[RMDB]
Record summary: This 177-nucleotide RNA was probed chemically with 2A3 and DMS. For 2A3 the reverse transcriptase was SuperScript II with manganese. For DMS the reverse transcriptase was MarathonRT. Conditions: 150 mM KOAc, 10 mM MgCl2 and 150 mM bicine (pH 8.5), 24 C.
RNA sequence: GGGAACGACUCGAGUAGAGUCGAAAACGACGCGAUGUACUUCAUCGAGGAGCGUAACCACAUUUUGGGCUACGAGUCUAAACUGGUCGGCGUGGGAGGGGCUGUUUCACGUGAAACUCCCAAUGCCUGUCCUCCUAACUUUCGAGUUAGGAGGACAAAAAGAAACAACAACAACAAC
Reactivity to 2A3 in 0.01 (KOAc 150mM, MgCl2 10mM, bicine 150mM(pH8.5), 24C), signal-to-noise 2, nucleotides 027 to 126: c040g060a000c010g000c010g010a020u010g020u140a150c130u140u130c000a020u000c020g010a040g040g050a160g080c040g010u010a050a040c000c000a090c020a090u070u030u060u050g030g000g040c010u080a060c180g080a020g050u000c030u060a000a050a090c010u050g080g040u080c040g010g000c010g020u030g000g000g020a020g000g000g000g000c030u010g050u090u120u140c110a090c070g130u130g030a050a000a000c000u010c050c000c000a030a030u060g000c000c000
Reactivity to DMS in 0.01 (KOAc 150mM, MgCl2 10mM, bicine 150mM(pH8.5), 24C), signal-to-noise 3, nucleotides 027 to 126: c040g020a110c090g010c030g010a010u000g010u000a130c250u000u000c010a010u000c020g010a100g020g010a220g010c030g020u010a070a150c010c010a110c140a140u000u000u000u000g010g000g000c010u010a090c170g020a060g020u010c030u010a030a100a070c130u000g000g000u010c110g020g000c030g020u010g000g000g000a070g010g000g020g040c070u000g000u000u000u000c100a110c190g010u010g000a020a040a090c040u000c000c000c000a060a050u000g020c040c040